[RMDB]
Source information: The record gives the reactivity of an RNA of 177 nucleotides to DMS and 2A3. Source: RMDB library TTRDES, as collected in RNAgym.
RNA sequence: GGGAACGACUCGAGUAGAGUCGAAAAGAUAUGGAUCCCAAACAGCAACAGCUAUGGGUCGGAAACGACCCUGUAGACAUGCUGGUAGGGAUCCUAAGUCAAAGAUUUGCUCUUCGGAGCAAAUCAAGCAUUAAUCUGUGUUCGCACAGAUUAAUGCAAAAGAAACAACAACAACAAC
Reactivity to DMS in 0.01 (KOAc 150mM, MgCl2 10mM, bicine 150mM(pH8.5), 24C), signal-to-noise 3, nucleotides 027 to 126: g000a010u000a200u000g010g000a000u000c000c000c010a070a160a300c020a010g010c010a080a090c300a220g020c010u000a010u000g010g000g010u000c000g020g000a070a070a080c010g000a020c000c000c000u010g030u000a030g000a020c060a300u010g020c000u000g000g010u000a240g000g010g010a020u000c000c000u000a010a060g000u000c040a150a150a080g000a000u000u000u020g000c000u000c000u000u030c250g050g010a030g000c000a000a000a000u010c020a050a110
Reactivity to 2A3 in 0.01 (KOAc 150mM, MgCl2 10mM, bicine 150mM(pH8.5), 24C), signal-to-noise 2, nucleotides 027 to 126: g000a000u030a040u080g000g010a030u030c000c030c000a040a220a000c000a030g000c040a020a100c040a180g030c030u010a030u060g000g000g000u000c000g000g060a050a010a020c010g030a010c000c000c000u000g000u000a000g010a050c080a200u300g000c030u000g000g070u100a170g030g000g020a000u000c010c000u010a030a010g000u000c070a120a120a030g000a020u000u000u020g000c030u000c000u080u150c300g200g000a000g000c020a000a000a000u000c000a010a010

The 2A3 profile rests on 4,107 reads. The reactions ran in a buffer of 150 mM KOAc, 10 mM MgCl2 and 150 mM bicine (pH 8.5), at 24 C. For DMS the reverse transcriptase was MarathonRT.